[RMDB]
RNA sequence: GGGAACGACUCGAGUAGAGUCGAAAAUAUCUUGUUUAGUUAGUCAUUACUUCAGUAUCCUAUCCUUAAGGAGAUAAUUCAUAAGGUUUAUUAUGAAUGUAUUUAUUAACAGUAAACAUGACAAAAACAUAUCCUCUAAUUUUUACUUAGUCAACUAUAAAUACGGACUAUUCGUAGUCCGUAUUUAAAAAGAAACAACAACAACAAC
Reactivity to 2A3 in 0.01 (KOAc 150mM, MgCl2 10mM, bicine 150mM(pH8.5), 24C), signal-to-noise 2, nucleotides 027 to 156: u110a010u020c050u050u030g000u010u030u020a030g000u010u010a000g010u000c010a010u030u020a000c000u080u030c050a040g030u030a050u090c020c020u020a090u100c030c020u120u040a070a040g070g040a040g000a050u260a190a080u140u060c050a020u020a070a000g000g000u040u100u130a110u060u070a030u040g010a020a020u090g010u030a030u000u040u000a030u010u050a030a000c010a020g120u080a020a020a000c000a030u030g020a010c000a040a150a020a040a020c030a030u050a060u080c030c020u010c040u100a130a300u150u130u200u150u150a140c040u030u050a040g110u160c000a030a010c060u300a000
Reactivity to DMS in 0.01 (KOAc 150mM, MgCl2 10mM, bicine 150mM(pH8.5), 24C), signal-to-noise 2, nucleotides 027 to 156: u010a070u000c040u000u000g020u000u000u000a210g000u000u010a060g010u000c030a030u000u000a070c050u000u000c050a100g000u010a080u000c060c120u000a140u010c030c070u000u010a120a080g000g000a050g030a150u000a050a050u000u000c000a060u000a060a070g000g010u000u000u000a040u020u010a060u000g000a070a000u010g000u000a030u000u000u000a030u060u000a020a100c020a150g000u000a040a040a060c030a030u000g010a070c030a070a120a100a080a090c030a090u000a080u000c050c020u000c040u030a080a080u020u000u020u000u020a150c100u000u000a090g000u000c060a050a070c060u010a150
Source: RMDB library OK3TST, as collected in RNAgym. An RNA of 207 nucleotides, treated with 2A3 and DMS and read out base by base. For 2A3, 1,071 sequencing reads were counted. The reactions ran in a buffer of 150 mM KOAc, 10 mM MgCl2 and 150 mM bicine (pH 8.5), at 24 C.